This 177-nucleotide RNA was probed chemically with 2A3 and DMS. High 2A3 reactivity points to a flexible backbone, as in loops and unpaired stretches. 2A3 adducts were read by reverse transcription with SuperScript II with manganese. The data come from the RNA Mapping Database (RMDB), library TTRDEL. The RNA was probed in 150 mM KOAc, 10 mM MgCl2 and 150 mM bicine (pH 8.5) at 24 C. For DMS the reverse transcriptase was MarathonRT.

RNA sequence: GGGAACGACUCGAGUAGAGUCGAAAAGAUAUGGAAAGUGAACUACUUAAAUAGAGCGAAGAACUCGGAAACGAGGGAGCUCUAUAUUAAGCACUUUCCUAAGUCAAAACCACACUUCGGUGUGGAAGCGUAUUACCUAGUUCGCUAGGUAAUACGCAAAAGAAACAACAACAACAAC
Reactivity to 2A3 in 0.01 (KOAc 150mM, MgCl2 10mM, bicine 150mM(pH8.5), 24C), signal-to-noise 2, nucleotides 027 to 126: g000a020u050a000u120g000g000a000a010a030g030u010g020a070a100c040u260a000c010u300u000a000a000a010u030a020g000a000g000c020g170a300a060g010a130a030c010u010c000g020g000a050a060a010c000g000a020g000g000g030a030g000c000u000c000u000a010u010a000u000u000a030a000g010c000a010c000u030u020u000c000c000u020a070a010g010u020c000a000a000a080a200c000c000a010c000a000c010u100u130c300g160g000u030g000u020g000g000a020a010
Reactivity to DMS in 0.01 (KOAc 150mM, MgCl2 10mM, bicine 150mM(pH8.5), 24C), signal-to-noise 1, nucleotides 027 to 126: g010a010u000a300u000g000g010a010a000a030g040u000g000a090a030c090u030a300c000u000u010a000a010a030u010a030g000a040g000c000g000a110a130g000a130a140c020u000c000g000g000a120a060a110c000g030a000g000g010g010a120g040c000u000c000u000a000u000a010u000u000a000a010g010c000a000c000u000u000u000c000c000u000a060a050g000u000c060a100a040a140a140c000c000a010c000a020c010u000u020c200g050g000u000g050u000g010g000a000a060